[RMDB]
RNA sequence: GGGAACGACUCGAGUAGAGUCGAAAAAUGAGUAAGCGUGGAUACACUCAACGGCGGCAGCGGGUGCGUCCAGCGUGUUUGUGCUAACGCCGAACAUAUGACCGGUGGCAUAAACCAGGAAAGGUCGUGUUAUCAAUGUGUUCGCACAUUGAUAACAAAAAGAAACAACAACAACAAC
Reactivity to DMS in 0.01 (KOAc 150mM, MgCl2 10mM, bicine 150mM(pH8.5), 24C), signal-to-noise 5, nucleotides 027 to 126: a070u000g010a130g020u000a120a100g020c040g040u000g010g000a070u000a100c090a050c040u000c030a110a160c120g010g000c020g000g020c070a080g020c140g010g000g000u000g000c040g010u000c010c030a070g000c090g020u000g020u000u010u010g010u000g030c000u000a100a140c170g010c020c030g000a070a070c070a080u000a110u000g010a070c090c030g010g020u000g000g000c030a050u000a020a030a070c010c040a080g000g000a040a050a080g000g020u000c090g020
Reactivity to 2A3 in 0.01 (KOAc 150mM, MgCl2 10mM, bicine 150mM(pH8.5), 24C), signal-to-noise 3, nucleotides 027 to 126: a000u160g010a050g090u120a200a000g010c050g060u070g030g000a050u070a090c030a000c040u020c050a110a040c040g040g020c020g030g000c000a020g020c010g040g040g000u000g000c010g030u000c010c000a020g030c030g000u110g060u010u040u040g030u050g010c000u050a170a030c060g000c020c010g090a050a040c040a120u210a120u190g030a040c030c030g000g000u020g030g000c010a040u060a080a000a030c030c000a030g100g090a100a090a010g030g020u030c040g040